[RMDB]
RNA sequence: GGGAACGACUCGAGUAGAGUCGAAAACGGUAUUGGUCAAGGCUAUACCGACAGCGCACCUUCAAAAGGGCGCUGAAUCCCCGGCCAAGCGCCGAAAUAUGAAUAGACACCGCUGGGCUGGUAGGGCAAAACAUGGCGAUCUUCGGAUCGCCAUGAACAAUCAUUCGUACUUCGGUACGAAUGAUUGAAAAGAAACAACAACAACAAC
Reactivity to DMS in 0.01 (KOAc 150mM, MgCl2 10mM, bicine 150mM(pH8.5), 24C), signal-to-noise 1, nucleotides 027 to 156: c040g000g080u000a040u000u010g110g000u000c070a090a190g030g010c030u010a100u000a050c050c020g050a270c030a010g000c040g080c010a040c000c030u020u000c200a060a030a140a140g030g010g000c040g040c000u000g010a010a180u000c000c010c010c000g000g030c010c000a060a110g020c020g010c090c040g050a040a060a050u000a170u000g000a130a170u000a120g020a080c100a050c090c010g040c020u000g000g020g030c080u000g020g010u010a090g030g020g050c090a090a100a130a180c030a030u000g010g000c010g010a000u000c090u000u000c300g020g000a020u000c000g020c000c000a010u020g010a020a160
Reactivity to 2A3 in 0.01 (KOAc 150mM, MgCl2 10mM, bicine 150mM(pH8.5), 24C), signal-to-noise 2, nucleotides 027 to 156: c000g010g010u020a020u060u140g070g050u070c100a160a130g130g000c010u020a000u000a020c000c010g020a020c000a000g000c020g000c100a300c080c000u050u080c090a040a100a160a070g020g000g000c000g000c000u000g000a000a010u000c000c000c000c010g000g000c000c000a070a020g000c050g030c070c020g050a000a130a000u230a080u090g080a090a060u060a110g040a030c010a010c050c040g000c050u030g000g010g030c030u040g000g090u070a100g050g010g070c050a030a010a010a090c010a000u000g000g000c010g000a000u010c020u020u010c080g060g000a000u010c000g000c000c000a000u000g000a000a000

Conditions: 150 mM KOAc, 10 mM MgCl2 and 150 mM bicine (pH 8.5), 24 C.
An RNA of 207 nucleotides, treated with DMS and 2A3 and read out base by base.
It was measured as part of the RMDB library M2RFOK.